[RMDB]
RNA sequence: GGGAACGACUCGAGUAGAGUCGAAAAGUCAAGAUGUGUAGGAUAGGUGGGAGGCUUUGAAGUGUGGACGCCAGACUGCAUGGAGCCGACCUUGAAAUACCACCCUUUAAUGGAAAAACAAAGUGAAGAAGAUCCAUUGGUUCGCCAAUGGAUCUUCAAAAGAAACAACAACAACAAC
Reactivity to DMS in 0.01 (KOAc 150mM, MgCl2 10mM, bicine 150mM(pH8.5), 24C), signal-to-noise 1, nucleotides 027 to 126: g000u000c080a060a100g000a030u000g000u000g000u000a040g040g010a130u000a050g000g020u020g000g000g000a250g010g010c040u000u000u000g000a110a090g050u000g040u000g000g000a080c080g010c040c160a040g000a080c040u010g000c050a080u000g000g000a020g020c010c000g010a040c220c030u010u010g000a050a090a090u010a060c000c000a040c010c030c050u000u000u000a070a130u000g000g000a020a020a040a110a100c060a090a070a080g010u010g040a110a090
Structure probing data (DMS) for a 177-nucleotide construct.
Reactivities are rounded to 0.1 and cut off at 0 and 3.
The RNA was probed in 150 mM KOAc, 10 mM MgCl2 and 150 mM bicine (pH 8.5) at 24 C.
DMS adducts were read by reverse transcription with MarathonRT.